This 177-nucleotide RNA was probed chemically with 2A3.
Values cover nucleotides 27 to 126.
The 2A3 profile rests on 583 reads.
Source: RMDB library OK1LIB, as collected in RNAgym.
RNA sequence: GGGAACGACUCGAGUAGAGUCGAAAACUCGAAAGAGACUAGCAUAUCUUAGGCAGAUGAACAAGUCACGUCUGAAAAGCGAAAGCCCUAAGAUAUGCAGCUGUGAAGACUUGACGCAGAAAAUAAAGCGUGCAUUAUCCUUCGGGAUAAUGCACGCAAAAGAAACAACAACAACAAC
Reactivity to 2A3 in 0.01 (KOAc 150mM, MgCl2 10mM, bicine 150mM(pH8.5), 24C), signal-to-noise 1, nucleotides 027 to 126: c000u010c000g030a080a060a010g160a020g050a060c070u050a000g040c000a000u030a000u000c000u050u000a000g020g030c040a000g000a000u010g040a040a100c000a010a000g010u020c000a000c050g000u000c000u000g070a090a070a040a010g020c030g050a060a110a000g010c000c000c000u050a040a000g000a000u030a000u000g000c000a020g000c010u000g030u000g060a230a120g000a020c000u030u030g000a000c000g000c030a010g130a060a090a000a000u300a170a050a000